[RMDB]
RNA sequence: GGGAACGACUCGAGUAGAGUCGAAAACAUUCGUGGAAUCAUACGGUAGGAUACUCGAUAUUCUACUGUCGUGCUCGCGGUUGAUCUUAGAUUAAUCCUUGUAAAAGGAAUUUGGAAUGUAUCUACCGUGUGACGAUAUAUUCGUAUAUCGUCACACAAAAGAAACAACAACAACAAC
Reactivity to 2A3 in 0.01 (KOAc 150mM, MgCl2 10mM, bicine 150mM(pH8.5), 24C), signal-to-noise 7, nucleotides 027 to 126: c020a060u110u140c020g030u060g080g070a070a050u090c020a030u030a080c010g030g000u000a000g010g000a000u010a010c040u070c210g160a200u010a010u020u000c000u000a000c000u010g020u020c050g010u040g010c050u010c030g000c010g000g030u020u060g020a060u000c010u050u110a060g020a070u050u130a120a070u030c000c000u010u020g140u190a090a190a030a040g040g020a030a050u100u050u090g090g050a140a080u090g030u080a060u000c010u040a050c030c050
Reactivity to DMS in 0.01 (KOAc 150mM, MgCl2 10mM, bicine 150mM(pH8.5), 24C), signal-to-noise 4, nucleotides 027 to 126: c050a090u010u020c070g050u000g000g010a050a070u020c070a050u000a040c010g000g000u010a020g000g000a020u000a000c010u020c290g010a130u000a010u000u000c000u000a010c010u000g000u010c120g050u000g000c300u010c040g000c060g000g000u000u000g000a050u000c040u020u010a110g010a070u000u000a110a090u000c000c000u000u000g000u040a090a060a010a030g020g000a040a080u010u000u000g010g000a090a070u010g010u000a030u010c020u000a090c250c110